Structure probing data (2A3 and DMS) for a 177-nucleotide construct. For DMS, 1,111 sequencing reads were counted. Reactivities are rounded to 0.1 and cut off at 0 and 3. DMS adducts were read by reverse transcription with MarathonRT. 2A3 adducts were read by reverse transcription with SuperScript II with manganese. Values cover nucleotides 27 to 126.
RNA sequence: GGGAACGACUCGAGUAGAGUCGAAAAGACAAUAGCGUAGGGAACCAAGCAAAGAGGUAAGAAAUCCCACGGUAGAAGGCUAGGUUCUAGCCGUGGGAAGAAGAAGUCCCACUCCCUACGCCGAUAACGGUAUUACUCUCUUCGGAGAGUAAUACCGAAAAGAAACAACAACAACAAC
Reactivity to 2A3 in 0.01 (KOAc 150mM, MgCl2 10mM, bicine 150mM(pH8.5), 24C), signal-to-noise 1, nucleotides 027 to 126: g070a010c080a060a250u050a150g000c000g030u000a000g000g000g030a000a020c030c030a070a020g060c070a090a210a030g130a090g040g020u130a100a020g020a060a040a000u000c000c000c000a000c020g010g000u020a020g010a070a000g140g050c200u180a070g020g200u060u050c000u010a050g030c010c000g000u000g020g010g000a000a000g000a000a000g000a000a010g080u050c000c000c000a010c010u000c000c000c000u000a000c010g000c000c010g010a030u080a070a070
Reactivity to DMS in 0.01 (KOAc 150mM, MgCl2 10mM, bicine 150mM(pH8.5), 24C), signal-to-noise 2, nucleotides 027 to 126: g030a140c230a130a110u000a100g010c000g010u010a000g000g010g010a010a030c000c000a100a220g000c150a110a120a080g000a110g000g000u000a080a120g000a050a070a080u000c020c000c000a030c010g010g020u000a000g000a010a020g020g030c170u000a060g010g000u000u000c000u000a050g060c030c000g040u000g000g000g000a010a020g000a030a020g000a150a090g000u000c000c040c010a240c040u000c000c000c000u000a000c030g020c000c230g000a030u000a100a050